[RMDB]
RNA sequence: GGGAACGACUCGAGUAGAGUCGAAAAAGUUAUGGGUUUUGAAAGCAUAACAGUGCCAUGAAAACAUCUAAUGUUAUCUUCAUCCCAAUUAUGAACCCAGAUAUUGGCUCCAAGGCAAUUAUAAUUGCAAAUUAAGCCGCUAUCAUUAUACACAAAAAAUUAGCUUCAAUUUCGAUUGAAGCUAAUUAAAAGAAACAACAACAACAAC
Reactivity to DMS in 0.01 (KOAc 150mM, MgCl2 10mM, bicine 150mM(pH8.5), 24C), signal-to-noise 2, nucleotides 027 to 156: a220g010u010u000a110u000g000g020g010u010u000u000u000g010a090a110a080g030c040a060u000a030a030c030a080g030u010g020c030c040a180u000g010a220a100a100a030c030a030u000c060u000a120a100u000g030u000u000a010u010c000u000u010c010a090u010c010c010c010a080a080u000u000a080u010g000a060a110c020c000c010a100g020a090u000a040u000u000g010g010c000u000c020c090a060a110g000g020c010a030a000u000u010a070u000a050a160u000u000g040c000a030a040a180u000u000a040a050g030c000c000g010c170u000a040u000c030a080u000u000a100u000a110c070a110c110a000a000a030a120
Reactivity to 2A3 in 0.01 (KOAc 150mM, MgCl2 10mM, bicine 150mM(pH8.5), 24C), signal-to-noise 2, nucleotides 027 to 156: a000g020u050u030a040u080g010g030g020u040u150u130u170g030a090a050a000g000c040a020u000a000a010c010a000g020u020g070c050c010a050u080g080a050a130a030a150c030a030u050c030u090a200a030u060g010u000u010a000u000c000u000u000c010a020u000c000c000c020a040a030u150u090a070u090g060a060a080c000c000c000a000g000a000u020a010u020u030g020g000c030u020c130c130a040a040g040g000c000a020a000u140u100a110u130a300a160u040u000g000c000a000a060a210u090u060a040a030g000c010c000g000c020u010a010u040c000a030u090u150a110u210a110c100a000c060a050a180a050a030